Structure probing data (DMS and 2A3) for a 177-nucleotide construct. For 2A3, 4,824 sequencing reads were counted. The DMS profile rests on 5,399 reads. For 2A3 the reverse transcriptase was SuperScript II with manganese. The RNA was probed in 150 mM KOAc, 10 mM MgCl2 and 150 mM bicine (pH 8.5) at 24 C. DMS adducts were read by reverse transcription with MarathonRT.
[RMDB]
RNA sequence: GGGAACGACUCGAGUAGAGUCGAAAAUGAUUGCUCUUCGGAGCAAUCACACUACCGAGGUUGUAGCUCGGUAUAAACAACAAACCCUUGGAAACAAGGGAAGAAGAAAACGAUUCGUCGUUUUCAAACGAGUACUAAGUUUCGACUUAGUACUCGUAAAAGAAACAACAACAACAAC
Reactivity to DMS in 0.01 (KOAc 150mM, MgCl2 10mM, bicine 150mM(pH8.5), 24C), signal-to-noise 5, nucleotides 027 to 126: u010g000a000u010u000g010c000u000c010u000u010c190g020g020a010g010c000a000a010u000c000a040c170a090c180u000a010c000c000g000a010g000g000u010u010g010u000a200g000c000u000c010g000g020u000a000u010a040a110a060c130a070a090c120a090a110a110c000c000c000u010u000g000g000a130a090a160c000a010a020g000g010g010a020a020g000a140a150g000a000a000a010a010c000g010a040u000u010c160g010u000c000g010u000u000u000u000c000a060a110
Reactivity to 2A3 in 0.01 (KOAc 150mM, MgCl2 10mM, bicine 150mM(pH8.5), 24C), signal-to-noise 3, nucleotides 027 to 126: u050g000a010u010u000g010c010u010c010u030u080c270g030g000a010g000c000a000a000u000c000a000c010a000c000u020a000c000c000g000a000g080g070u300u240g170u300a060g080c010u000c000g000g010u000a000u020a010a010a010c010a020a000c030a020a150a060c000c010c000u000u000g000g030a030a040a040c020a000a020g000g120g010a000a010g020a000a020g000a010a000a010a000c020g010a010u050u100c200g050u020c010g000u080u010u030u000c000a060a100